The record gives the reactivity of an RNA of 177 nucleotides to 2A3.
RNA sequence: GGGAACGACUCGAGUAGAGUCGAAAAGACUGCGUGCACUCGAGACGAUAUCGAGCCGGAAAUUAAUCGAUAAUGUCUCCUGUAGUGGAUACGAUCCGGCAAGUAUCGACUACAUGUGCUCGUAGGACGGUGCCUGCCUGUUCGCAGGCAGGCACCGAAAAGAAACAACAACAACAAC
Reactivity to 2A3 in 0.01 (KOAc 150mM, MgCl2 10mM, bicine 150mM(pH8.5), 24C), signal-to-noise 2, nucleotides 027 to 126: g050a030c000u000g000c000g010u000g070c000a030c080u050c000g000a010g040a040c000g000a000u010a000u040c000g000a000g000c000c000g000g150a000a180a060u300u300a120a150u270c130g000a010u000a110a070u030g070u000c000u100c040c060u080g030u000a000g010u020g170g000a000u000a000c040g000a060u000c040c000g020g000c000a010a010g020u000a000u020c050g130a000c000u010a030c000a070u110g000u000g000c000u000c050g000u000a010g000g000a000